Source information: The record gives the reactivity of an RNA of 207 nucleotides to 2A3. The 2A3 profile rests on 497 reads. Source: RMDB library OK3TST, as collected in RNAgym. Reactivities are given for positions 27 through 156. Conditions: 150 mM KOAc, 10 mM MgCl2 and 150 mM bicine (pH 8.5), 24 C.
[RMDB]
RNA sequence: GGGAACGACUCGAGUAGAGUCGAAAAAGAAUCUACUAAGGUAGAAUAUGUAAGCAAAUAGGCAUAUCCUUACAUGCUCGGCUGUGGUCCAAUGCUUAAACUCUCACUGUGACUUUCGUCUACUUCAGGGGGGUUUUCUUCUACCAUGGUCAUCACAUCCCGAGUGAUUAUUCGUAAUCACUCGGGAAAAAGAAACAACAACAACAAC
Reactivity to 2A3 in 0.01 (KOAc 150mM, MgCl2 10mM, bicine 150mM(pH8.5), 24C), signal-to-noise 1, nucleotides 027 to 156: a020g150a060a040u030c020u080a020c040u220a080a030g090g000u010a020g070a180a050u090a030u070g010u090a030a070g020c040a070a130a080u090a060g150g000c010a090u020a020u120c020c040u000u000a040c010a040u120g040c050u120c080g020g000c010u010g010u010g000g000u000c020c060a060a000u040g010c010u030u040a010a010a010c010u000c000u000c010a170c170u020g060u070g060a000c000u170u300u260c040g000u020c040u090a120c080u220u060c010a000g000g000g000g000g000g000u020u000u010u000c010u000u000c010u000a010c000c000a040u000g000g050u000c030a090u100c040a090c010a040